[RMDB]
RNA sequence: GGGAACGACUCGAGUAGAGUCGAAAAGAUUCCGGAGAGGGAGCCUGAGAAACGGCUACCACAUCUAAGGAAGCCAGCAGGCUCGGGGAGAUAGUGACGAAAAAUAACAAUACAGGACUCAUAGCCGGUCUCCGGCUUAUUUCGAUAAGCCGGAGACAAAAGAAACAACAACAACAAC
Reactivity to 2A3 in 0.01 (KOAc 150mM, MgCl2 10mM, bicine 150mM(pH8.5), 24C), signal-to-noise 2, nucleotides 027 to 126: g010a060u040u000c030c000g020g020a100g000a020g030g170g000a010g000c020c010u000g010a040g050a140a160a030c130g000g000c000u040a090c000c000a080c050a100u100c110u130a000a100g000g000a000a000g010c000c010a010g020c020a000g000g000c040u010c030g000g030g000g000a130g000a030u110a040g090u090g120a040c070g070a110a030a000a010a020u300a150a000c030a040a040u150a070c020a010g030g010a030c000u050c070a050u080a080g020c010c000g020
Reactivity to DMS in 0.01 (KOAc 150mM, MgCl2 10mM, bicine 150mM(pH8.5), 24C), signal-to-noise 1, nucleotides 027 to 126: g020a260u000u020c000c000g000g000a030g010a110g000g000g040a020g020c000c000u000g050a100g000a140a110a140c250g000g000c000u000a100c000c010a130c140a070u010c180u070a200a110g010g020a090a020g050c000c000a020g040c070a030g020g000c000u000c000g000g000g000g000a040g000a020u020a060g000u000g020a050c170g020a060a010a090a060a070u010a060a030c070a130a180u030a040c050a080g000g010a020c150u060c050a090u010a110g020c040c010g010